An RNA of 177 nucleotides, treated with 2A3 and DMS and read out base by base.
For 2A3 the reverse transcriptase was SuperScript II with manganese.
It was measured as part of the RMDB library M2PK50.
The 2A3 profile rests on 9,685 reads.

RNA sequence: GGGAACGACUCGAGUAGAGUCGAAAACUUAACGCGUUCGCGCGUUAAGAAACAACAUAAACAUCGAGUUGACGAUGACACAAAUACCGUCAGUGUAGAGGGAAAGCAUUCGCUUCGGCGAAUGCAAGUCUUGAUGAAGUUUCGACUUCAUCAAGACAAAAGAAACAACAACAACAAC
Reactivity to 2A3 in 0.01 (KOAc 150mM, MgCl2 10mM, bicine 150mM(pH8.5), 24C), signal-to-noise 6, nucleotides 027 to 126: c000u000u010a010a010c000g020c000g030u040u070c200g010c000g000c000g080u000u000a000a000g000a000a070a000c050a020a000c000a070u260a120a180a020c010a090u020c020g020a040g100u020u020g050a030c020g010a110u110g080a020c030a000c020a190a170a020u240a150c000c020g030u040c020a030g020u030g080u190a040g020a050g050g040g020a050a090a020g000c000a000u000u010c000g000c010u030u070c200g090g000c000g000a000a000u000g000c000a000a000
Reactivity to DMS in 0.01 (KOAc 150mM, MgCl2 10mM, bicine 150mM(pH8.5), 24C), signal-to-noise 5, nucleotides 027 to 126: c020u000u000a010a000c000g010c000g010u000u010c210g020c020g010c010g000u000u010a000a000g000a120a090a070c100a060a050c090a080u010a110a110a130c070a080u000c020g010a180g010u000u010g010a090c030g000a030u020g010a080c150a060c230a050a070a070u000a050c030c020g010u000c030a030g000u000g010u010a120g000a050g010g000g000a100a080a060g010c000a010u000u000c000g010c000u000u000c150g020g020c000g000a010a010u000g020c010a020a030